This 207-nucleotide RNA was probed chemically with DMS and 2A3.
The DMS profile rests on 2,758 reads.

[RMDB]
RNA sequence: GGGAACGACUCGAGUAGAGUCGAAAAGAGCGAUUAGACAAAGGGGUAGAGCUACAUAUUAGAUAGAUGUAUAAUCGUUCAAGUUACAUCAAAACAUCUUCAAUAUUUAUUACUUACUUUCCUUUCUGCCAGAGUACGGUAUUCGUACCGUACUCAAAUGGAGUGAUAUCUUCGGAUAUCACUCCAUAAAAGAAACAACAACAACAAC
Reactivity to DMS in 0.01 (KOAc 150mM, MgCl2 10mM, bicine 150mM(pH8.5), 24C), signal-to-noise 2, nucleotides 027 to 156: g000a160g020c030g010a160u010u000a050g020a140c070a020a110a040g000g010g010g040u000a070g040a030g010c020u010a060c180a080u000a010u000u000a140g030a140u010a100g010a040u000g000u000a090u000a070a070u000c040g000u010u000c080a100a200g000u000u010a060c040a060u000c070a100a160a070a080c010a040u000c010u000u000c010a010a040u000a040u000u000u000a100u020u000a060c040u000u000a070c070u020u000u000c020c020u010u000u000c060u000g000c030c020a110g000a030g030u000a010c000g020g000u000a020u000u010c280g010u000a000c000c020g020u000a010c030u010c020a010a060
Reactivity to 2A3 in 0.01 (KOAc 150mM, MgCl2 10mM, bicine 150mM(pH8.5), 24C), signal-to-noise 4, nucleotides 027 to 156: g040a000g000c020g020a050u080u140a100g040a100c100a050a080a050g010g020g010g010u020a040g010a030g150c040u100a050c030a050u080a040u060u040a050g080a120u110a050g020a020u020g050u020a080u050a130a090u080c060g040u040u070c030a040a020g030u070u130a070c020a060u070c030a070a080a070a040c010a020u010c000u080u030c010a040a010u020a030u050u140u090a120u100u070a040c020u040u030a040c010u100u140u180c010c000u050u100u070c050u100g080c040c040a030g000a000g000u000a000c000g000g000u010a010u010u040c090g060u000a010c000c000g000u000a000c010u000c000a000a000